[RMDB]
RNA sequence: GGGAACGACUCGAGUAGAGUCGAAAAGAAAACUCAUUAUUGGAAGUAGACGAGGGGAUUAUUGAAGCGGCGAAAGCGAUGGGCGCUUCACCACUACAAAUCAUUAGAUAUUUUUUAAUUCCUGAAGAAUGAUGAAUGUUUUCGAACAUUCAUCAUUAAAAGAAACAACAACAACAAC
Reactivity to DMS in 0.01 (KOAc 150mM, MgCl2 10mM, bicine 150mM(pH8.5), 24C), signal-to-noise 5, nucleotides 027 to 126: g000a080a050a070a140c140u010c040a070u020u020a090u020u010g010g010a140a080g000u020a050g000a080c100g000a130g000g000g010g000a080u010u040a090u040u010g010a040a020g010c030g020g010c030g010a060a060a060g010c060g010a150u020g020g010g000c020g010c010u010u000c020a050c040c020a070c030u000a060c040a050a080a060u010c010a030u020u020a070g000a070u010a000u000u000u000u010u010u020a030a150u000u000c000c000u000g020a100a100g000
Reactivity to 2A3 in 0.01 (KOAc 150mM, MgCl2 10mM, bicine 150mM(pH8.5), 24C), signal-to-noise 7, nucleotides 027 to 126: g070a000a040a010a030c000u010c010a020u010u110a020u040u080g120g050a190a030g030u060a010g020a080c170g070a260g050g030g000g020a040u120u080a080u140u300g010a030a000g010c030g120g000c040g090a200a060a000g080c070g060a100u140g120g020g050c020g000c000u010u020c010a020c010c000a040c000u060a020c010a030a090a040u010c010a020u010u030a010g010a020u030a100u080u020u000u000u010u030a080a120u030u040c010c000u040g090a080a050g100